[RMDB]
RNA sequence: GGGAACGACUCGAGUAGAGUCGAAAAGAUAUGGAGCGUGUUGGGAGCUACUAGUCGGAAACGACUACUAGCUUUGAUCAACCGCUCCUAAGUCAAAAGACAAUUAUAGCUUCGGCUAUAAUUGUCACGAGAUAAUAGUGUUCGCACUAUUAUCUCGAAAAGAAACAACAACAACAAC
Reactivity to DMS in 0.01 (KOAc 150mM, MgCl2 10mM, bicine 150mM(pH8.5), 24C), signal-to-noise 4, nucleotides 027 to 126: g000a000u000a040u010g000g000a010g010c010g020u010g020u000u010g010g000g000a000g020c000u000a010c280u000a010g010u000c000g010g000a010a020a040c000g010a000c000u000a010c100u000a020g030c000u000u000u010g010a040u000c010a010a010c020c000g010c000u000c000c000u000a000a030g000u010c010a120a100a150a170g000a010c000a010a010u000u000a000u000a010g000c010u000u010c300g030g000c000u000a000u000a010a000u000u000g010u000c000a040
Reactivity to 2A3 in 0.01 (KOAc 150mM, MgCl2 10mM, bicine 150mM(pH8.5), 24C), signal-to-noise 4, nucleotides 027 to 126: g000a000u010a000u050g000g010a010g000c020g000u180g020u090u010g010g010g010a060g010c000u000a000c010u000a000g000u000c000g000g000a020a000a000c010g010a010c010u000a000c010u000a010g010c000u300u180u060g010a010u000c000a000a000c000c000g000c000u000c000c000u000a000a000g000u000c010a040a000a070a140g010a000c000a010a000u000u010a000u000a010g000c020u070u060c300g150g000c000u010a000u000a000a000u010u010g000u000c000a000